[RMDB]
Structure probing data (DMS and 2A3) for a 177-nucleotide construct.
RNA sequence: GGGAACGACUCGAGUAGAGUCGAAAACUGGUUAAUUCCGAUAACGAACGAGGCUCAAAUAUAUUAAAUAGAUAUCUUCAGGAUUAUGGUGCUGAAACUUAUAUAGCCUUCAUUCAUGGUGGCAGUACUACCGUAAGGUUUUCGAACCUUACGGUAGAAAAGAAACAACAACAACAAC
Reactivity to DMS in 0.01 (KOAc 150mM, MgCl2 10mM, bicine 150mM(pH8.5), 24C), signal-to-noise 5, nucleotides 027 to 126: c050u000g010g020u010u010a060a160u010u010c000c010g000a080u020a110a090c160g020a030a060c110g000a060g010g000c030u010c090a060a080a090u010a050u000a070u020u030a070a050a150u020a130g010a060u000a040u010c050u000u000c060a050g010g010a070u000u030a060u020g020g020u010g000c030u000g000a020a040a080c120u010u010a040u000a040u010a080g000c000c010u000u010c050a050u000u010c080a060u010g000g020u010g000g000c040a060g000u000a170
Reactivity to 2A3 in 0.01 (KOAc 150mM, MgCl2 10mM, bicine 150mM(pH8.5), 24C), signal-to-noise 7, nucleotides 027 to 126: c030u040g060g020u100u130a090a040u180u040c010c010g030a110u050a130a090c050g010a020a000c040g000a020g040g000c010u020c060a030a160a000u090a010u030a030u090u290a090a090a100u170a060g060a030u060a040u080c030u050u020c010a020g040g010a040u050u080a070u240g090g010u080g030c010u020g010a040a030a020c020u130u020a030u020a020u060a140g000c000c000u060u140c040a080u080u030c030a050u090g050g000u020g060g010c000a000g060u030a050
DMS adducts were read by reverse transcription with MarathonRT. The reactions ran in a buffer of 150 mM KOAc, 10 mM MgCl2 and 150 mM bicine (pH 8.5), at 24 C.